[RMDB]
RNA sequence: GGGAACGACUCGAGUAGAGUCGAAAAUCAUGUGCCUUCGGGCACAUGAAAACAUGCAGGAUCGCCAAAGGAUGGAAAUAAUGGCGAACCAAUAAGGAGAAAAAAGACCCGAGUUCGCUCGGGUCAACUUACGUCUAAGCUUCGGCUUAGACGUAAGAAAAGAAACAACAACAACAAC
Reactivity to DMS in 0.01 (KOAc 150mM, MgCl2 10mM, bicine 150mM(pH8.5), 24C), signal-to-noise 1, nucleotides 027 to 126: u000c000a000u000g010u000g010c000c000u000u020c270g080g000g080c030a000c000a000u030g000a010a090a080a140c120a080u000g030c100a170g000g010a060u000c000g010c000c000a050a070a250g000g010a100u000g060g010a020a120a170u000a070a120u000g000g010c000g000a010a110c030c030a140a040u050a030a100g000g030a100g000a000a010a120a080a160a180g000a010c000c000c000g000a010g000u000u010c210g020c030u000c000g000g000g000u000c000a000a020
Reactivity to 2A3 in 0.01 (KOAc 150mM, MgCl2 10mM, bicine 150mM(pH8.5), 24C), signal-to-noise 2, nucleotides 027 to 126: u010c000a000u010g000u000g000c000c020u060u070c290g000g000g000c030a010c000a000u010g010a000a000a000a000c020a000u160g000c060a030g000g040a060u010c010g000c020c000a050a040a050g220g010a120u250g050g100a060a080a070u190a030a050u090g010g000c020g020a000a000c020c010a030a030u140a140a050g140g040a090g200a030a100a020a010a040a090g000a030c010c010c000g000a000g000u020u080c150g010c030u000c000g000g090g000u000c000a010a000
Structure probing data (DMS and 2A3) for a 177-nucleotide construct.
For DMS, 690 sequencing reads were counted.
Reactivities are given for positions 27 through 126.
The RNA was probed in 150 mM KOAc, 10 mM MgCl2 and 150 mM bicine (pH 8.5) at 24 C.